This 177-nucleotide RNA was probed chemically with 2A3 and DMS. For 2A3, 2,678 sequencing reads were counted.

[RMDB]
RNA sequence: GGGAACGACUCGAGUAGAGUCGAAAAGACGGGCUUCGGCCCGUCAAAAGAGCUCAUCCAUAAUUGUCAUGAUCUGAGACAGUGACAACUAUGGAUGAGCUCUCAAAAAGCGCUCGUUCGCGAGCGCGUAACUAUACCUCUUCGGAGGUAUAGUUACAAAAGAAACAACAACAACAAC
Reactivity to 2A3 in 0.01 (KOAc 150mM, MgCl2 10mM, bicine 150mM(pH8.5), 24C), signal-to-noise 2, nucleotides 027 to 126: g000a000c000g010g010g010c030u050u090c140g090g030c010c000c000g000u000c000a010a000a010a000g000a000g000c010u000c000a010u010c000c010a000u000a010a020u030u000g000u000c000a020u060g080a220u090c100u260g170a110g060a210c060a070g060u010g020a000c010a000a010c000u000a000u000g000g010a000u000g000a000g000c000u000c000u000c000a000a000a000a000a000g000c010g010c010u030c010g050u080u090c160g020c010g100a000g000c000g000c000
Reactivity to DMS in 0.01 (KOAc 150mM, MgCl2 10mM, bicine 150mM(pH8.5), 24C), signal-to-noise 2, nucleotides 027 to 126: g000a010c000g010g000g020c010u010u010c190g030g000c000c000c000g000u020c010a010a050a150a030g000a010g020c000u000c000a000u000c000c000a000u000a000a020u000u000g000u010c010a010u020g010a170u010c120u000g000a160g010a140c130a250g000u000g010a000c000a010a010c050u000a000u000g000g020a000u000g000a000g000c000u000c010u000c000a030a060a080a150a130g000c000g000c000u010c000g020u020u010c220g010c000g000a000g020c010g040c000
It was measured as part of the RMDB library RFMREP. For 2A3 the reverse transcriptase was SuperScript II with manganese.